[RMDB]
RNA sequence: GGGAACGACUCGAGUAGAGUCGAAAAUGGGAAGUGCUGGAGGCCGGCUUGGUGCAGCGAUCGCGCUUGCUUGAUGCCAUCCUCGCGGACUUGUACGGGCCCCGCAGCAUGCUCACCGAGGGUGUCCACCAUGGACGACCUUCGGGUCGUCCAUGGUAAAAGAAACAACAACAACAAC
Reactivity to 2A3 in 0.01 (KOAc 150mM, MgCl2 10mM, bicine 150mM(pH8.5), 24C), signal-to-noise 2, nucleotides 027 to 126: u160g010g030g000a050a030g000u050g060c010u050g020g000a050g030g010c060c020g060g020c000u000u060g130g000u090g000c000a020g030c030g090a090u190c060g000c010g010c060u000u090g010c040u110u090g060a120u220g060c000c020a060u010c020c030u030c020g080c010g000g010a020c000u020u020g000u110a100c030g030g010g000c000c010c000c030g020c000a010g000c040a130u120g000c000u010c020a070c020c030g000a060g030g000g060u070g020u000c000c040
Reactivity to DMS in 0.01 (KOAc 150mM, MgCl2 10mM, bicine 150mM(pH8.5), 24C), signal-to-noise 1, nucleotides 027 to 126: u020g060g010g020a150a120g010u020g010c020u000g010g020a050g000g000c110c060g000g010c020u000u000g000g130u020g000c010a050g020c060g010a060u000c280g000c020g000c080u000u000g030c140u000u030g020a060u000g040c020c060a060u000c040c000u030c040g030c000g000g000a080c090u030u000g000u000a070c120g030g000g030c000c000c030c240g080c040a070g000c040a050u040g040c030u000c030a090c030c000g000a110g000g060g030u060g000u000c000c010